[RMDB]
RNA sequence: GGGAACGACUCGAGUAGAGUCGAAAAUUUGAGCCAGAUACCGCCAACGUUGCCGGCAAUGGUGAAAAAUGCUUCAUUCGUCGCAUUACCUUCCGCGAAGCGGUCGACGUUACCGGUGGCGAACGCCGGUCAUCGGGCCUUUCGAGGCCCGAUGACCAAAAGAAACAACAACAACAAC
Reactivity to 2A3 in 0.01 (KOAc 150mM, MgCl2 10mM, bicine 150mM(pH8.5), 24C), signal-to-noise 1, nucleotides 027 to 126: u220u090u300g020a010g040c000c000a000g070a020u100a090c070c020g050c020c020a000a000c050g060u050u000g000c180c000g000g180c050a020a240u180g050g000u130g050a000a070a000a000a000u040g100c120u000u020c000a140u020u090c270g070u010c070g030c130a000u030u010a010c140c000u070u010c000c000g000c000g070a020a050g170c040g000g030u030c000g000a000c000g000u000u000a190c000c000g000g000u000g020g000c110g020a120a010c000g190c000c010